[RMDB]
RNA sequence: GGGAACGACUCGAGUAGAGUCGAAAAACAACUGGACAACGCAGAACUGCCGCCGGCCAGCGGUGUGGCGCUGCGGAUAGAAACAGAUCUGAGAGAACACGGUGCCAGCUUCUUUGAUGAAAUCCAGGAUGCCUUACCUAUUCGUAGGUAAGGCAUCAAAAGAAACAACAACAACAAC
Reactivity to DMS in 0.01 (KOAc 150mM, MgCl2 10mM, bicine 150mM(pH8.5), 24C), signal-to-noise 3, nucleotides 027 to 126: a080c060a090a230c050u010g000g000a090c060a070a110c020g000c000a020g010a030a040c030u000g000c040c010g010c020c020g000g030c190c240a120g020c030g010g000u000g000u020g000g000c020g000c000u000g000c000g010g030a120u000a040g020a090a060a090c080a040g010a070u000c040u000g000a080g000a080g020a060a070c100a030c090g000g020u000g020c070c050a060g010c030u000u000c040u020u000u000g020a090u010g000a050a050a080u000c030c020a100g010
Reactivity to 2A3 in 0.01 (KOAc 150mM, MgCl2 10mM, bicine 150mM(pH8.5), 24C), signal-to-noise 3, nucleotides 027 to 126: a000c030a000a040c010u020g020g020a010c020a090a000c060g010c000a000g010a030a010c050u260g010c000c020g000c000c000g060g060c230c060a130g120c070g000g040u060g130u280g040g000c010g000c000u000g000c000g010g000a020u060a020g150a010a090a010c040a020g080a060u040c040u100g080a030g000a020g000a180a010c040a020c060g060g000u060g030c020c010a050g000c030u030u010c000u040u090u060g030a030u020g000a070a070a100u000c020c010a030g030